[RMDB]
An RNA of 177 nucleotides, treated with 2A3 and DMS and read out base by base. Source: RMDB library TTRDEL, as collected in RNAgym. DMS (dimethyl sulfate) methylates the pairing face of unpaired adenines and cytosines. For DMS, 1,240 sequencing reads were counted. Conditions: 150 mM KOAc, 10 mM MgCl2 and 150 mM bicine (pH 8.5), 24 C. For 2A3, 3,012 sequencing reads were counted.
RNA sequence: GGGAACGACUCGAGUAGAGUCGAAAAGAUAUGGACGUGAUCUGGGAGAUACUCGGAAACGAGAAUAUCGACGAUCAGAAUACGUCCUAAGUCAAAAGAUUGGUGUGUCUUCGGACACACCAAUCAAGGGAUACAUACGGUUCGCCGUAUGUAUCCCAAAAGAAACAACAACAACAAC
Reactivity to 2A3 in 0.01 (KOAc 150mM, MgCl2 10mM, bicine 150mM(pH8.5), 24C), signal-to-noise 2, nucleotides 027 to 126: g030a000u060a010u160g000g000a010c000g030u020g030a090u000c000u010g000g000g020a020g010a010u000a020c010u040c010g020g000a130a050a060c020g010a000g060a280a270u080a000u050c090g140a230c020g030a110u030c010a000g000a020a000u050a000c010g000u040c000c000u000a080a010g070u010c030a010a070a060a020g010a010u020u010g000g010u000g000u000g010u020c010u050u130c300g030g000a000c000a000c000a000c020c000a000a000u000c000a010a010
Reactivity to DMS in 0.01 (KOAc 150mM, MgCl2 10mM, bicine 150mM(pH8.5), 24C), signal-to-noise 2, nucleotides 027 to 126: g020a000u000a300u030g000g000a000c000g020u010g000a010u010c000u000g020g020g020a090g020a010u000a040c000u000c000g000g000a090a060a130c020g010a010g000a100a130u010a010u000c000g000a190c210g000a020u000c000a010g020a080a130u000a010c000g030u000c000c000u000a040a040g000u010c020a120a160a110a070g000a030u050u000g020g010u000g000u000g010u010c000u000u040c190g010g000a010c000a000c010a010c000c000a000a010u000c000a090a100